Structure probing data (2A3 and DMS) for a 177-nucleotide construct. The data come from the RNA Mapping Database (RMDB), library OK2TRN. Conditions: 150 mM KOAc, 10 mM MgCl2 and 150 mM bicine (pH 8.5), 24 C.
RNA sequence: GGGAACGACUCGAGUAGAGUCGAAAAGACACAUGAGUUCUUUGAGUCCAGCCUCAUCUACUACAAUGGAAGACCAGACCUGAUGGAUGUGAGAGGGGAUUCAUUGAUCAACACUACAGACAAAUUACGGAAAGUGUAAUUUCGAUUACACUUUCCGAAAAGAAACAACAACAACAAC
Reactivity to 2A3 in 0.01 (KOAc 150mM, MgCl2 10mM, bicine 150mM(pH8.5), 24C), signal-to-noise 4, nucleotides 027 to 126: g020a000c040a000c010a190u110g080a030g160u040u000c010u020u020u040g000a010g000u020c000c000a070g130c050c010u050c010a190u050c010u070a060c010u020a040c070a110a080u100g030g040a130a050g110a180c000c050a050g040a100c010c020u060g050a110u160g090g010a030u100g030u040g070a110g000a030g040g040g000g000a000u010u030c000a000u010u050g020a020u050c030a020a090c020a020c060u180a030c030a060g120a040c020a090a090a070u180u150a080
Reactivity to DMS in 0.01 (KOAc 150mM, MgCl2 10mM, bicine 150mM(pH8.5), 24C), signal-to-noise 3, nucleotides 027 to 126: g020a090c100a070c090a080u000g000a150g010u020u000c000u000u010u000g010a040g020u000c040c020a120g000c060c010u010c020a020u000c030u010a090c090u000a120c130a090a120u000g000g020a080a070g030a100c160c170a110g000a100c050c050u010g000a230u010g020g010a080u000g010u010g000a090g000a050g000g000g000g000a060u000u000c020a030u000u010g010a060u010c040a060a060c050a070c090u010a050c120a140g010a080c130a060a050a160u000u010a140